[RMDB]
RNA sequence: GGGAACGACUCGAGUAGAGUCGAAAAAGCAGCCGGUGAUGGAUCGUUACCAGCAGCAUGGUAUGUCGCCGCUGACGCAAGAGCAGAAGCCGGCAGCCAAAGUGGUGAACGACAAUACGCCGCAAACGAUCGAUCGGCAUUUCGAUGCCGAUCGAUCAAAAGAAACAACAACAACAAC
Reactivity to 2A3 in 0.01 (KOAc 150mM, MgCl2 10mM, bicine 150mM(pH8.5), 24C), signal-to-noise 1, nucleotides 027 to 126: a000g100c120a040g000c020c010g000g010u000g000a050u020g000g140a150u000c000g000u000u070a050c010c000a010g290c070a000g000c020a100u000g020g000u170a280u270g010u020c020g010c060c060g000c000u000g000a000c010g000c050a290a120g110a160g130c010a010g000a000a000g010c010c000g000g020c080a000g000c000c000a110a000a000g070u020g000g000u110g060a060a000c010g030a000c000a090a000u080a080c000g020c000c000g070c010a020a000a070c160